[RMDB]
RNA sequence: GGGAACGACUCGAGUAGAGUCGAAAAGCAGCCUUUAAGUAAAGUCGCAUCAAUAGUUACACAAGGUUUCUAGUUUUUAAUUGUGUAAAGGGCCAAAAUCUCCUUGAUCACUUCGCUCCGUACAAUGUCAUCGUCGGUAAAGUUCAUGUGGAAGAUACGAAUGUUUGUGUUUCGACACAAACAUUCGAAAAGAAACAACAACAACAAC
Reactivity to 2A3 in 0.01 (KOAc 150mM, MgCl2 10mM, bicine 150mM(pH8.5), 24C), signal-to-noise 3, nucleotides 027 to 156: g010c030a000g020c000c030u020u140u140a140a050g040u090a070a070a080g040u090c030g020c070a030u050c040a090a150u080a090g080u040u050a020c010a000c020a030a030g080g020u050u090u050c050u090a080g050u020u010u030u000u260a100a080u100u070g010u000g000u040a030a020a020g040g030g010c040c030a070a130a030a040u060c090u040c020c000u010u040g020a020u090c020a010c130u040u060c060g030c040u010c010c000g000u040a020c050a090a110u150g030u020c020a070u010c080g020u010c020g000g030u050a060a010a040g020u080u060c010a010u080g000u070g060g010a040a020g020a050u090a070
Reactivity to DMS in 0.01 (KOAc 150mM, MgCl2 10mM, bicine 150mM(pH8.5), 24C), signal-to-noise 2, nucleotides 027 to 156: g050c020a110g010c030c030u000u000u010a040a160g000u000a050a080a120g000u000c040g000c040a090u000c050a080a140u000a110g000u000u000a010c020a050c000a010a060g030g000u010u000u020c070u010a090g020u010u000u020u020u020a070a230u000u000g020u000g030u000a030a090a110g010g050g030c070c030a050a060a080a060u010c020u000c030c030u010u000g030a080u020c050a070c050u000u000c040g000c020u010c020c050g000u010a100c050a100a070u000g000u000c050a080u010c050g000u000c030g000g040u000a060a010a080g000u000u010c010a070u000g040u000g000g000a080a080g000a110u010a180